[RMDB]
RNA sequence: GGGAACGACUCGAGUAGAGUCGAAAAGGAGGCGCAAGGAGCCUUAGAACCCGGGAUUCCCGAAUGGGAUAUCCUGUCCCUUCGGGGACGCUCCCUUACGGGAGCGGGAACGCGGGGAAAGGAAACACUUGGAUAAACACUUCGGUGUUUAUCCAAGAAAAGAAACAACAACAACAAC
Reactivity to DMS in 0.01 (KOAc 150mM, MgCl2 10mM, bicine 150mM(pH8.5), 24C), signal-to-noise 2, nucleotides 027 to 126: g000g000a010g000g010c030g000c130a150a110g050g000a170g010c000c000u000u020a040g020a100a210c020c000c000g040g000g000a150u010u010c000c030c000g040a060a050u070g020g000g000a000u030a020u020c020c020u030g000u000c000c000c000u010u000c020g010g000g010g000a020c040g010c000u020c000c000c000u000u070a170c300g000g000g000a000g000c000g000g000g010a130a060c080g000c090g000g000g000g020a090a110a060g000g010a130a040a170c180a180
Reactivity to 2A3 in 0.01 (KOAc 150mM, MgCl2 10mM, bicine 150mM(pH8.5), 24C), signal-to-noise 3, nucleotides 027 to 126: g080g020a030g010g010c030g000c080a050a130g110g040a060g080c010c010u010u000a070g040a110a070c000c000c000g000g030g000a080u060u040c000c000c010g030a090a070u300g000g000g000a000u030a030u040c000c020u010g010u000c000c000c000u010u020c030g000g000g000g000a000c000g000c000u010c000c000c010u090u180a060c130g000g000g000a010g000c000g010g000g000a040a010c030g000c030g120g000g000g000a030a000a070g040g030a050a120a000c060a010